Chemical mapping of a 177-nucleotide RNA with DMS and 2A3.
2A3 adducts were read by reverse transcription with SuperScript II with manganese.
RNA sequence: GGGAACGACUCGAGUAGAGUCGAAAACGCUGACCAUCCUCCCCUGCCCUGCCCAGGCUUGGGUGUAGAAGACCCUGUGGGUGAAGUCUCUGUCCAUGUUGAGCUGUUCACUCAUCCAGGAACUGGGUCAUCGGUAUACAUUCGUGUAUACCGAUGAAAAAGAAACAACAACAACAAC
Reactivity to DMS in 0.01 (KOAc 150mM, MgCl2 10mM, bicine 150mM(pH8.5), 24C), signal-to-noise 8, nucleotides 027 to 126: c130g020c070u010g000a120c050c050a120u000c020c010u000c020c010c010c020u000g000c030c010c030u000g000c010c010c010a100g000g010c030u000u010g010g010g020u000g010u010a090g000a140a140g010a070c030c010c020u000g010u000g010g010g020u000g000a050a100g000u010c050u000c030u000g010u010c050c070a070u000g000u000u000g010a040g010c080u000g000u000u000c070a090c040u000c010a020u000c040c010a050g010g010a060a100c040u000g000g010g020
Reactivity to 2A3 in 0.01 (KOAc 150mM, MgCl2 10mM, bicine 150mM(pH8.5), 24C), signal-to-noise 4, nucleotides 027 to 126: c030g020c120u090g070a080c020c030a070u100c000c000u020c010c010c000c000u010g040c010c010c010u030g010c020c000c000a000g000g020c000u040u030g010g030g000u020g020u060a080g020a290a020g050a060c020c000c000u020g030u050g030g010g000u020g000a020a020g080u030c000u000c020u070g110u090c080c050a100u170g100u130u060g080a020g000c040u040g180u130u020c010a010c030u010c010a020u050c030c000a010g050g030a080a160c050u050g000g010g020